[RMDB]
RNA sequence: GGGAACGACUCGAGUAGAGUCGAAAAGGGAUGAGGUCGAUUGCUUCGUAGGCCCGAACCUUGGUUCGAAACGGGUCUUCGUCGUCAACCAGGUGAACAAAGAUGGGCAAUUCGACGAGCACAAGUGAUGUGAGUGACAGUUCGCUGUCACUCACAUAAAAGAAACAACAACAACAAC
Reactivity to DMS in 0.01 (KOAc 150mM, MgCl2 10mM, bicine 150mM(pH8.5), 24C), signal-to-noise 2, nucleotides 027 to 126: g000g010g020a080u020g030a110g010g040u000c040g000a100u000u030g000c000u010u000c020g010u010a130g010g000c000c040c020g000a110a080c030c050u000u000g040g030u000u000c180g050a070a140a090c060g000g030g010u000c190u000u010c010g000u010c080g000u020c080a030a020c060c060a050g020g000u000g030a090a080c130a150a110a110g000a090u040g010g000g000c020a020a050u010u010c010g010a020c060g000a140g010c090a050c200a070a100g040u010g000
Reactivity to 2A3 in 0.01 (KOAc 150mM, MgCl2 10mM, bicine 150mM(pH8.5), 24C), signal-to-noise 1, nucleotides 027 to 126: g170g000g040a090u110g060a100g000g090u010c040g000a000u020u010g000c030u110u120c060g040u070a030g010g000c010c000c010g030a030a010c020c020u010u150g090g000u020u070c120g040a090a040a010c090g080g000g040u040c000u110u030c020g000u020c020g060u000c000a020a080c030c000a050g080g030u110g040a060a010c070a100a110a030g050a080u170g040g000g000c020a010a050u110u020c050g020a010c010g000a050g090c000a050c020a090a080g070u060g100
This 177-nucleotide RNA was probed chemically with DMS and 2A3. The 2A3 profile rests on 1,242 reads. The RNA was probed in 150 mM KOAc, 10 mM MgCl2 and 150 mM bicine (pH 8.5) at 24 C.